[RMDB]
RNA sequence: GGGAACGACUCGAGUAGAGUCGAAAAAGAGACUAGGUGGCGGUCGGUCACGAGACGUGGCUUAAGAUAGAGUCCGUUCGCGCUGAAAAGCGUUCGUCGGGAAGAAAGCCUUAGCAAGGCCGGAGCCAGACGAAGGGUAGCCAUUAUUGGCUGCCUCGAACAUAAUUAGGUUCGCCUAAUUAUGUUCAAAAGAAACAACAACAACAAC
Reactivity to 2A3 in 0.01 (KOAc 150mM, MgCl2 10mM, bicine 150mM(pH8.5), 24C), signal-to-noise 7, nucleotides 027 to 156: a000g090a010g010a020c040u060a060g070g020u020g020g040c040g030g080u070c040g010g010u020c020a010c090g090a090g030a070c080g040u070g000g000c000u060u060a080a030g030a080u170a060g060a020g040u030c050c020g020u060u060c050g000c000g000c020u020g020a020a030a030a030g010c000g000u010u030c010g010u020c010g000g000g030a030a050g040a070a110a010g010c010c000u030u050a040g020c080a090a020g010g000c000c010g030g000a010g020c010c010a020g000a020c020g020a040a030g010g000g000u000a000g010c000c020a070u180u140a150u200u220g000g000c000u000g000c000c000u010c030
Reactivity to DMS in 0.01 (KOAc 150mM, MgCl2 10mM, bicine 150mM(pH8.5), 24C), signal-to-noise 3, nucleotides 027 to 156: a100g020a080g000a070c020u000a110g030g020u000g000g030c020g010g010u010c040g030g020u010c010a060c020g010a180g010a050c060g020u000g020g030c010u000u000a040a120g010a230u000a110g000a050g010u000c010c000g010u000u010c040g010c050g030c020u000g000a090a040a120a090g020c020g000u000u000c020g030u000c010g000g000g000a030a060g000a200a150a070g000c010c000u010u010a180g020c150a300a110g000g030c000c020g000g000a300g010c000c000a040g020a030c020g000a070a120g020g020g050u010a010g030c000c000a090u000u010a220u000u000g030g010c000u000g010c010c010u000c070